[RMDB]
RNA sequence: GGGAACGACUCGAGUAGAGUCGAAAAAAGGGUAAGUAAGGAGCUGAAAACGAGUCCUUCGGAGGGCGAAGAAACUCAUUAAUUCAUUUUGAUGAGGGCCCCUCAUUCAAAUGUUAUGCUUAGUGCUCACUAUACUGAUCUUCGGAUCAGUAUAGUGAAAAGAAACAACAACAACAAC
Reactivity to DMS in 0.01 (KOAc 150mM, MgCl2 10mM, bicine 150mM(pH8.5), 24C), signal-to-noise 2, nucleotides 027 to 126: a040a050g000g030g000u000a050a100g020u010a110a080g000g010a030g020c070u000g000a020a060a130a120c100g020a160g010u000c030c030u000u000c070g000g000a060g000g000g000c080g000a050a090g020a080a060a100c000u010c010a010u010u000a020a040u020u030c290a170u020u000u000u000g040a000u010g010a020g000g000g010c110c050c020c000u000c030a090u000u010c100a080a100a030u000g010u000u010a100u010g000c030u000u000a080g000u000g010c110u010
Reactivity to 2A3 in 0.01 (KOAc 150mM, MgCl2 10mM, bicine 150mM(pH8.5), 24C), signal-to-noise 2, nucleotides 027 to 126: a000a020g070g020g000u060a050a050g020u040a030a050g040g010a020g010c040u050g110a020a030a050a040c030g020a010g040u040c010c000u010u010c050g030g030a050g040g010g000c040g010a030a020g040a050a090a020c000u000c010a020u030u050a030a040u130u080c040a020u040u000u030u120g020a000u000g010a000g030g060g030c040c010c000c000u000c000a060u160u070c040a020a070a080u080g030u100u060a070u160g040c020u020u080a020g030u050g190c000u020